[RMDB]
RNA sequence: GGGAACGACUCGAGUAGAGUCGAAAAGGGCAUCCACUUCUGCCGUUAAGUUGCAAAAUAAUGAGAUCAAACCUUCAGGUCUAAAAACCAUGGUUGUGUCUGCGGGUCAAGAGCAAACUAACUGUAAGAAUUAAGCCUAGUUCGCUAGGCUUAAUUCAAAAGAAACAACAACAACAAC
Reactivity to DMS in 0.01 (KOAc 150mM, MgCl2 10mM, bicine 150mM(pH8.5), 24C), signal-to-noise 2, nucleotides 027 to 126: g000g000g010c040a070u000c020c090a130c130u000u000c050u000g020c010c030g020u000u000a050a080g010u000u000g010c080a120a090a090a070u020a060a080u000g010a120g000a080u000c060a100a110a090c020c010u000u000c170a060g000g000u010c040u010a070a060a130a110a070c040c010a090u000g010g010u000u010g020u000g010u000c010u000g000c070g020g010g020u000c060a030a070g030a150g000c010a060a040a100c070u000a020a100c030u010g010u030a050a190
Reactivity to 2A3 in 0.01 (KOAc 150mM, MgCl2 10mM, bicine 150mM(pH8.5), 24C), signal-to-noise 1, nucleotides 027 to 126: g000g000g000c040a000u030c020c000a040c020u070u040c050u030g030c010c010g000u010u060a090a030g000u030u060g000c000a000a130a000a070u220a040a220u060g030a030g020a090u050c040a060a070a040c010c000u050u090c070a000g000g030u030c020u110a080a050a000a000a070c020c000a040u070g020g040u040u090g010u030g020u040c010u020g010c040g020g030g020u050c030a040a000g020a010g060c000a010a060a000c020u040a010a030c020u000g040u070a150a000